[RMDB]
RNA sequence: GGGAACGACUCGAGUAGAGUCGAAAACAUACACGAAUCUAGAAGAUUGGAAGAGCAGAGAGAACUCCCUACAUCAGAAGAAGUUAGUGACUAUGCUAACACUCUCACUCUUCUUAGUAGGAUGGCACACCAGGGAGAAGUUCGCUUCUCCCUGGUGAAAAGAAACAACAACAACAAC
Reactivity to DMS in 0.01 (KOAc 150mM, MgCl2 10mM, bicine 150mM(pH8.5), 24C), signal-to-noise 2, nucleotides 027 to 126: c060a180u000a080c160a120c110g020a050a010u000c030u000a100g020a140a170g000a090u000u000g010g030a020a000g010a050g000c070a040g040a030g020a050g020a120a160c090u000c010c010c000u000a100c090a110u000c190a100g000a070a040g000a080a110g060u020u000a010g000u000g000a110c250u000a070u000g000c000u010a010a000c000a300c000u000c040u000c040a140c040u000c000u000u000c000u000u010a070g010u000a060g000g030a090u000g000g000c190a160
Reactivity to 2A3 in 0.01 (KOAc 150mM, MgCl2 10mM, bicine 150mM(pH8.5), 24C), signal-to-noise 2, nucleotides 027 to 126: c020a000u210a060c040a000c100g090a090a010u000c000u080a140g040a300a040g010a300u060u210g020g020a000a000g000a020g040c300a020g030a000g000a000g010a090a040c060u020c030c000c010u060a040c040a150u180c030a050g130a140a000g010a080a040g070u000u010a020g020u010g140a160c100u090a070u300g030c000u020a040a000c000a020c000u000c010u030c010a020c020u000c010u000u030c000u000u020a030g000u000a010g030g130a050u050g100g000c040a010